[RMDB]
RNA sequence: GGGAACGACUCGAGUAGAGUCGAAAAGACGCCUUUAGAAGAAGAGACUAGGGGGUAUUCCGGUGUGGGAUACUUAGUAAUAUGCAACGCUAAUUGCAUAAGAUUGUAGGACGGAAUUUACAGUCUUUAGAGAUAAGCACGUUCGCGUGCUUAUCAAGGUCAUAUACCGUUUCGACGGUAUAUGACCAAAAGAAACAACAACAACAAC
Reactivity to DMS in 0.01 (KOAc 150mM, MgCl2 10mM, bicine 150mM(pH8.5), 24C), signal-to-noise 2, nucleotides 027 to 156: g010a140c070g000c030c020u010u000u010a090g010a160a130g010a100a130g020a140g030a110c060u000a070g000g020g020g000g020u000a100u000u000c050c000g020g040u000g030u000g000g000g000a100u000a010c060u000u000a100g030u010a090a130u000a060u000g010c010a030a100c070g000c140u010a050a090u000u020g020c030a050u000a030a040g000a080u010u000g030u000a040g010g000a070c020g020g010a060a300u000u010u000a020c070a060g000u020c000u000u020u000a110g010a120g000a020u000a020a020g030c000a000c010g010u000u010c300g040c040g090u000g000c010u000u000a000u000c000a040a070
Reactivity to 2A3 in 0.01 (KOAc 150mM, MgCl2 10mM, bicine 150mM(pH8.5), 24C), signal-to-noise 4, nucleotides 027 to 156: g030a010c020g070c010c010u060u030u090a050g020a110a020g010a050a010g010a030g020a000c010u040a050g040g010g000g000g020u030a040u030u020c000c020g140g070u150g030u130g070g030g000a020u030a060c010u030u040a020g020u060a040a110u030a030u080g000c000a040a000c050g010c150u110a080a050u080u000g000c000a010u020a030a020g040a020u040u080g020u050a010g010g060a020c050g030g040a030a030u110u050u080a080c040a020g010u010c000u020u030u060a100g030a000g000a050u000a000a000g000c010a000c000g010u040u050c110g010c000g090u000g000c000u010u000a000u010c000a000a000